Structure probing data (2A3 and DMS) for a 207-nucleotide construct. The DMS profile rests on 4,426 reads. Reactivities are given for positions 27 through 156. The reactions ran in a buffer of 150 mM KOAc, 10 mM MgCl2 and 150 mM bicine (pH 8.5), at 24 C. DMS adducts were read by reverse transcription with MarathonRT.
[RMDB]
RNA sequence: GGGAACGACUCGAGUAGAGUCGAAAAAGUGCAUUGGAAAAAUAGUCAUUUUAAGACCAGAGGACAUGGCUGGAUGUGGUGUUUCAUGCCUGUAAUCCCAGCACUUCCGGAGUCCAAGGAGGGAGGAUUGCUUGAGCCCAGGAGUUUGAGACCAGCACAUCCGUAUGGAUUUCGAUCCAUACGGAUGAAAAGAAACAACAACAACAAC
Reactivity to 2A3 in 0.01 (KOAc 150mM, MgCl2 10mM, bicine 150mM(pH8.5), 24C), signal-to-noise 3, nucleotides 027 to 156: a000g040u020g000c010a030u060u080g020g050a050a160a060a060a040u150a080g000u090c040a060u030u080u110u160a150a030g030a060c020c010a040g020a060g070g030a020c020a050u050g030g000c000u020g030g000a030u040g060u050g040g080u050g030u030u090u140c070a030u090g040c010c000u020g020u080a030a030u030c030c000c000a030g030c030a020c000u050u000c020c010g050g020a040g020u010c030c020a030a020g030g010a040g000g020g000a020g020g000a030u020u080g020c040u040u050g030a030g000c030c030c030a040g020g030a060g020u050u070u110g020a030g020a050c030c010a030g030c020a020
Reactivity to DMS in 0.01 (KOAc 150mM, MgCl2 10mM, bicine 150mM(pH8.5), 24C), signal-to-noise 2, nucleotides 027 to 156: a070g010u010g010c030a120u030u040g020g000a020a070a090a110a120u000a070g020u020c020a100u000u000u020u000a050a180g000a090c030c040a160g020a140g020g010a050c040a080u000g020g000c040u010g000g020a080u000g000u020g000g070u000g000u010u000u000c040a070u010g020c000c030u010g030u000a100a130u000c040c020c020a100g010c070a080c050u020u020c040c040g010g000a140g030u010c020c030a070a090g020g010a120g000g030g000a130g030g010a080u000u000g000c040u000u000g000a080g040c010c020c020a150g000g000a080g000u000u010u020g000a120g020a080c030c020a080g020c080a230